An RNA of 177 nucleotides, treated with 2A3 and DMS and read out base by base. The reactions ran in a buffer of 150 mM KOAc, 10 mM MgCl2 and 150 mM bicine (pH 8.5), at 24 C. It was measured as part of the RMDB library RFMREP.
RNA sequence: GGGAACGACUCGAGUAGAGUCGAAAAAGAGGUAGGUGCGAGAAAUGACGGGCAUCGUGCAAAUCGUUCAUUGUCUCCCAGCUACUUCAACAAAAGAAAUCAGACGAACUUCGGUUCGUCUGAUUUCGUGAGAUUGAGUGUUCGCACUCAAUCUCACAAAAGAAACAACAACAACAAC
Reactivity to 2A3 in 0.01 (KOAc 150mM, MgCl2 10mM, bicine 150mM(pH8.5), 24C), signal-to-noise 3, nucleotides 027 to 126: a000g010a000g000g010u020a010g080g210u010g000c010g000a000g000a010a010a010u010g000a000c020g010g040g020c040a110u250c180g100u150g030c040a080a070a220u140c010g090u140u040c060a010u020u110g280u190c000u000c020c030c000a010g110c000u000a000c000u020u000c020a000a030c040a010a150a010a030g010a000a000a000u000c000a000g000a000c000g000a010a010c020u050u130c260g070g000u000u000c000g010u000c000u000g000a000u000u000u000c000
Reactivity to DMS in 0.01 (KOAc 150mM, MgCl2 10mM, bicine 150mM(pH8.5), 24C), signal-to-noise 2, nucleotides 027 to 126: a080g010a000g000g010u000a000g000g020u000g010c300g000a000g020a090a010a010u000g040a010c010g040g030g000c060a270u010c210g010u000g000c040a080a070a120u020c000g000u010u010c000a010u000u000g000u000c020u000c000c080c000a010g000c000u000a000c000u000u000c020a060a130c130a060a070a060a190g000a010a000a000u000c010a000g030a030c000g000a020a000c000u000u010c290g020g000u000u000c000g000u000c000u000g000a000u000u000u000c000